This 177-nucleotide RNA was probed chemically with 2A3 and DMS. Reactivities are given for positions 27 through 126.

RNA sequence: GGGAACGACUCGAGUAGAGUCGAAAAACAAGGAAAUAGGAGAAGGAACGGUAGAAAAGAGCGAGCCCUCCGAUCCGAUGGGGCCCUGGACCCCUCAGCUCUGGAGACUUCCGACCUGUGAGGUCGAGCCUUAUAUAAUCUUCGGAUUAUAUAAGGCAAAAGAAACAACAACAACAAC
Reactivity to 2A3 in 0.01 (KOAc 150mM, MgCl2 10mM, bicine 150mM(pH8.5), 24C), signal-to-noise 3, nucleotides 027 to 126: a000c040a040a020g030g050a030a140a060u130a160g030g020a040g030a170a090g030g010a040a000c030g050g030u090a040g100a070a140a040a010g040a030g070c050g020a010g020c010c010c000u000c020c010g010a030u030c000c000g000a020u080g020g000g020g000c020c030c030u050g080g050a080c010c000c000c020u020c030a020g000c010u000c030u090g020g010a050g020a080c020u140u020c020c010g010a030c020c010u090g050u090g080a030g000g010u010c010g000a020
Reactivity to DMS in 0.01 (KOAc 150mM, MgCl2 10mM, bicine 150mM(pH8.5), 24C), signal-to-noise 4, nucleotides 027 to 126: a100c090a070a150g000g000a050a080a060u010a160g020g000a050g010a110a090g010g010a050a060c060g000g010u000a080g000a090a040a060a080g010a100g010c060g020a070g010c060c030c020u000c030c020g000a080u000c040c020g000a080u010g020g000g010g010c030c020c060u000g010g000a090c010c020c020c020u010c050a040g000c080u000c010u010g030g010a080g010a100c150u010u000c070c010g000a050c100c030u020g010u010g020a070g000g020u000c010g020a140